RNA sequence: GGGAACGACUCGAGUAGAGUCGAAAAGAAAGAAAGAAAGUUCAUUGUUUAUCGGAAACUUUAAACUAUAACCAUUCAAACUUUUCCAGAAGUUAGUUUGAAUAGAAAUUAAAAAGAAACUUCUGAAGAUUAGGGCAGGAUUCGUCCUGCCCUAAUCAAAAGAAACAACAACAACAAC
Reactivity to 2A3 in 0.01 (KOAc 150mM, MgCl2 10mM, bicine 150mM(pH8.5), 24C), signal-to-noise 3, nucleotides 027 to 126: g020a000a030a000g190a000a060a020g120a070a100a000g010u040u030c020a050u060u130g070u090u110u070a250u160c060g050g040a080a030a040c010u000u010u050a060a110a000c000u060a040u060a150a030c010c020a010u000u010c000a000a000a000c000u000u080u000u000c120c000a020g000a000a030g000u010u000a000g010u030u030u020g020a010a000u070a090g010a000a030a010u160u230a080a080a000a000a000g010a000a000a000c000u000u000c000u000g000a050a030